[RMDB]
An RNA of 177 nucleotides, treated with 2A3 and DMS and read out base by base. 2A3 adducts were read by reverse transcription with SuperScript II with manganese. DMS (dimethyl sulfate) methylates the pairing face of unpaired adenines and cytosines. The 2A3 profile rests on 1,465 reads. For DMS, 1,724 sequencing reads were counted.
RNA sequence: GGGAACGACUCGAGUAGAGUCGAAAAUGGAUGUUCCUGGCUGGGCAAAUGGUUGAUUACCAUGGAAUCAAGCAGUAACAAGCCAGUCUUACCUUUGACUUUAGUGAUAAGGAUUAAGUAAUAAUCACUGACGGUAAAUGUUCGCAUUUACCGUCAGAAAAGAAACAACAACAACAAC
Reactivity to 2A3 in 0.01 (KOAc 150mM, MgCl2 10mM, bicine 150mM(pH8.5), 24C), signal-to-noise 2, nucleotides 027 to 126: u130g090g010a070u100g000u010u100c010c000u040g160g100c000u030g020g000g030c040a080a040a080u040g000g040u010u040g080a100u010u160a110c000c020a050u090g100g040a010a070u040c020a070a010g050c000a010g020u070a080a050c040a210a010g010c000c000a020g000u010c000u010u110a090c000c030u090u000u040g080a040c010u250u190u190a240g070u300g290a020u020a020a040g020g000a000u080u130a070a030g060u010a020a150u050a080a040u070c050a010
Reactivity to DMS in 0.01 (KOAc 150mM, MgCl2 10mM, bicine 150mM(pH8.5), 24C), signal-to-noise 3, nucleotides 027 to 126: u000g020g000a110u000g010u020u010c080c000u000g040g040c000u000g010g010g020c080a120a140a020u000g010g010u000u010g030a130u010u000a110c040c030a110u000g010g010a100a110u010c010a020a030g030c020a020g010u000a100a060c110a060a170g000c000c010a030g010u010c040u000u010a070c030c030u010u030u000g010a280c150u000u000u010a080g020u000g000a070u000a040a020g000g020a120u000u020a050a060g000u010a080a080u000a100a140u010c050a100